[RMDB]
An RNA of 177 nucleotides, treated with 2A3 and DMS and read out base by base.
RNA sequence: GGGAACGACUCGAGUAGAGUCGAAAAAGAGAGCGCGAAAAAGAUCGAUCGAUCGUUUGAACGCGCAAGUUUAAGUUUGAUACGGGCAUACUAGCUACCUAGCUAGCAAAACAAACUUAAUAAAGAACAAAUUCAUUGAGUUCGCUCAAUGAAUUUGAAAAGAAACAACAACAACAAC
Reactivity to 2A3 in 0.01 (KOAc 150mM, MgCl2 10mM, bicine 150mM(pH8.5), 24C), signal-to-noise 1, nucleotides 027 to 126: a010g140a000g010a000g000c030g020c000g030a000a000a000a000a060g010a000u020c050g020a070u140c250g000a020u000c070g070u030u040u110g020a100a050c000g000c000g020c000a020a010g010u010u010u010a000a010g000u000u000u040g100a110u140a190c070g010g070g000c080a030u090a120c040u010a010g000c000u050a260c090c030u020a010g000c000u000a010g010c030a050a050a020a080c010a000a000a000c000u000u040a000a010u110a060a100a040g030a040a010
Reactivity to DMS in 0.01 (KOAc 150mM, MgCl2 10mM, bicine 150mM(pH8.5), 24C), signal-to-noise 3, nucleotides 027 to 126: a110g020a170g000a160g020c000g020c000g010a060a130a040a050a030g000a010u000c000g010a150u010c200g010a000u000c000g000u000u000u000g010a130a160c000g000c000g000c000a060a020g010u000u000u000a010a000g010u000u010u000g000a090u010a120c180g000g000g020c160a140u010a120c010u000a010g000c000u000a110c260c200u010a040g010c000u000a010g000c050a030a110a110a110c000a000a000a000c000u000u000a000a020u000a040a090a110g000a100a130
For 2A3, 1,909 sequencing reads were counted. The RNA was probed in 150 mM KOAc, 10 mM MgCl2 and 150 mM bicine (pH 8.5) at 24 C.